[RMDB]
RNA sequence: GGGAACGACUCGAGUAGAGUCGAAAAGAGCUGUAGUACAGCAAGAAGCACGCGAUCCUUGGCACCGCGUGCAAGACAAUAAGGCCGGCAAAGAAGGAAAGCCGGCAUAAGUGCCAAGUAAGAGAGAAUCAGUGAGCAUAUUCGUAUGCUCACUGAUAAAAGAAACAACAACAACAAC
Reactivity to DMS in 0.01 (KOAc 150mM, MgCl2 10mM, bicine 150mM(pH8.5), 24C), signal-to-noise 3, nucleotides 027 to 126: g030a130g000c000u000g000u010a100g010u030a300c030a000g000c000a040a190g010a110a150g000c000a040c010g000c000g050a130u010c160c000u040u000g010g010c000a010c010c000g030c010g000u000g000c030a030a000g030a120c210a120a080u010a070a130g050g000c000c000g000g020c030a060a100a090g000a250a100g000g000a130a110a160g000c000c000g010g050c000a000u000a010a120g000u010g010c000c000a030a000g000u110a080a010g000a090g000a140g010a130
Reactivity to 2A3 in 0.01 (KOAc 150mM, MgCl2 10mM, bicine 150mM(pH8.5), 24C), signal-to-noise 3, nucleotides 027 to 126: g090a030g000c000u000g010u100a060g100u160a110c000a000g010c020a020a020g130a060a040g030c000a000c000g000c000g030a030u070c070c000u010u000g010g040c030a010c000c000g000c010g010u000g010c000a010a000g030a020c030a010a040u180a230a010g060g030c000c020g000g000c020a050a140a080g160a150a010g110g050a070a150a020g010c000c010g000g000c000a000u000a010a020g000u000g000c000c040a000a000g000u020a020a040g040a020g000a000g070a050